[RMDB]
RNA sequence: GGGAACGACUCGAGUAGAGUCGAAAACUCCCCUCAAAAUCGUUUCAGUCCAAAAUUGAUUCGGCGGCCCUGUCAUGAGGCCGAAACGAAGGCACGUACCCCUUCGAAUCGCGUCGGGGAGUCAGCGAAAGCACUGACCCUUUCGAGGGUCAGUGAAACGACAUAAUAGCUUCGGCUAUUAUGUCGUAAAAGAAACAACAACAACAAC
Reactivity to 2A3 in 0.01 (KOAc 150mM, MgCl2 10mM, bicine 150mM(pH8.5), 24C), signal-to-noise 2, nucleotides 027 to 156: c000u010c000c000c010c040u170c150a110a100a040a100u070c040g000u030u040u020c040a080g030u030c030c050a040a040a040a110u040u070g020a060u020u000c010g050g020c000g040g030c090c070c030u150g060u160c030a150u100g030a010g030g010c000c000g030a010a000a000c010g000a000a040g040g010c070a020c250g100u110a060c020c030c000c010u040u020c010g040a020a020u110c030g020c050g070u050c030g000g000g000g000a010g050u040c030a010g100c010g100a120a000a040g060c060a000c010u010g000a000c020c000c000u030u040u060c200g080a010g010g020g010u000c000a000g000u000g000a010a000
Reactivity to DMS in 0.01 (KOAc 150mM, MgCl2 10mM, bicine 150mM(pH8.5), 24C), signal-to-noise 1, nucleotides 027 to 156: c020u000c010c010c000c120u000c090a020a060a170a070u010c050g000u010u000u010c010a050g030u000c030c170a100a130a200a120u000u000g000a110u010u020c060g020g010c050g000g000c000c000c010u040g040u000c250a150u000g000a100g010g030c040c000g040a010a020a120c020g040a140a010g060g030c020a040c140g000u020a150c050c030c010c030u000u000c010g000a010a180u010c080g010c150g060u000c090g020g000g000g000a030g060u000c040a110g000c000g040a090a060a210g030c000a030c000u020g000a040c010c000c010u000u000u000c160g010a010g010g020g000u000c010a010g000u010g000a010a060